Chemical mapping of a 207-nucleotide RNA with DMS and 2A3. The data come from the RNA Mapping Database (RMDB), library OK3TST. The RNA was probed in 150 mM KOAc, 10 mM MgCl2 and 150 mM bicine (pH 8.5) at 24 C. For DMS the reverse transcriptase was MarathonRT. The 2A3 profile rests on 6,269 reads. The DMS profile rests on 4,732 reads.
RNA sequence: GGGAACGACUCGAGUAGAGUCGAAAACACACUUCCCGGGAAGUGUGGCCUAACCCCGGUUAGGGACUGCUCCCGGCACAGCUAGCAGGAAGAGACUGGGAGCCCUGACUGGCGGGAUGGAUCGUAUGAUCAGCUGCCAGACAGAUCUAGCGUGCAACGUAAUUAAUCAGUUCGCUGAUUAAUUACGAAAAGAAACAACAACAACAAC
Reactivity to DMS in 0.01 (KOAc 150mM, MgCl2 10mM, bicine 150mM(pH8.5), 24C), signal-to-noise 2, nucleotides 027 to 156: c010a060c010a040c010u000u000c000c030c210g000g040g020a030a020g030u000g020u010g010g000c070c000u010a110a100c050c000c080c130g020g010u000u000a040g020g060g000a130c060u010g030c040u020c010c000c020g020g000c000a170c040a140g010c060u020a060g000c070a150g020g020a120a180g020a220g020a110c010u020g010g020g020a120g010c030c110c020u000g000a130c010u000g000g010c010g030g000g000a100u000g020g010a030u000c010g010u000a060u010g030a030u000c020a170g020c060u000g000c000c010a050g000a210c030a050g000a050u000c050u000a070g000c020g060u000g010c030a110a200
Reactivity to 2A3 in 0.01 (KOAc 150mM, MgCl2 10mM, bicine 150mM(pH8.5), 24C), signal-to-noise 6, nucleotides 027 to 156: c010a000c000a010c000u020u020c010c040c020g100g200g000a020a000g010u010g000u010g010g010c000c000u040a050a040c000c010c010c030g080g020u060u120a060g040g020g020a040c080u090g000c000u030c000c020c000g010g000c010a020c010a040g010c010u010a010g000c020a010g070g070a110a040g090a010g040a100c070u080g010g000g000a010g000c000c010c000u010g010a010c010u000g000g000c010g030g000g030a050u100g200g010a000u010c020g060u300a110u300g010a010u010c010a000g040c000u010g000c000c000a010g000a040c010a010g040a070u050c010u010a000g000c010g010u010g010c010a050a060